[RMDB]
RNA sequence: GGGAACGACUCGAGUAGAGUCGAAAAAAUUUCUGGGUCCUAAAAGCCUCAAUCAUUAGACAAUACUAUAUAGCAAGAGUGGAGAAGGACUUCACCCUUCCUGUAGGAAGACUACAUGGUGGAGUUCCCAAUAGGUAACCUUCGGGUUACCUAUUGGAAAAGAAACAACAACAACAAC
Reactivity to DMS in 0.01 (KOAc 150mM, MgCl2 10mM, bicine 150mM(pH8.5), 24C), signal-to-noise 2, nucleotides 027 to 126: a070a100u010u000u000c040u010g030g010g010u000c010c000u000a080a060a110a160g000c100c000u010c070a050a060u000c040a060u010u010a060g000a060c050a040a080u000a130c040u000a040u020a080u010a060g020c090a020a040g000a050g030u000g000g010a080g010a110a110g000g000a070c000u000u000c010a010c010c000c060u000u000c060c040u010g000u020a090g020g010a040a060g010a170c070u010a000c100a060u020g000g010u000g000g000a030g010u000u000c020
Reactivity to 2A3 in 0.01 (KOAc 150mM, MgCl2 10mM, bicine 150mM(pH8.5), 24C), signal-to-noise 1, nucleotides 027 to 126: a000a000u110u030u070c050u090g000g020g030u070c010c000u050a110a140a060a000g020c010c010u060c020a030a150u070c030a060u070u010a050g010a030c010a070a080u020a030c010u030a060u060a080u160a200g020c050a080a020g000a010g050u050g030g030a140g040a130a100g050g030a050c000u030u000c000a010c040c000c030u070u080c020c040u140g080u060a070g000g030a100a070g000a050c040u040a030c060a070u180g000g050u020g000g020a030g000u040u010c070